[RMDB]
RNA sequence: GGGAACGACUCGAGUAGAGUCGAAAAGGAAGUCGGCAAAAUAGAUGCGUAAGUUCGCAAGAAGCAUUGGCUCUGAGGGCAAAGUCAGAGAAAACCGGAAGGCCAGUGUCCUCUCGCAUGCAGCCGUUCUUCAGAUGUUGUUUUGGCGCUCGCCGCCGGAACUCUUGAACUUCGGUUCAAGAGUUCCAAAAGAAACAACAACAACAAC
Reactivity to 2A3 in 0.01 (KOAc 150mM, MgCl2 10mM, bicine 150mM(pH8.5), 24C), signal-to-noise 1, nucleotides 027 to 156: g070g000a000a000g040u010c000g030g050c050a040a010a080a200u160a190g160a070u040g010c000g010u090a050a070g040u120u150c150g120c120a110a010g000a080a000g020c020a020u000u000g020g000c020u030c000u300g020a030g000g020g000c040a120a070a070g050u150c010a010g120a000g060a180a070a070a100c020c000g060g080a060a000g010g000c000c000a000g010u000g020u050c040c010u040c000u040c010g030c010a000u070g040c010a000g000c000c000g010u050u070c000u000u000c000a040g000a170u100g000u020u000g010u000u010u010u040g010g000c020g000c050u160c160g290c250c010g010c000c000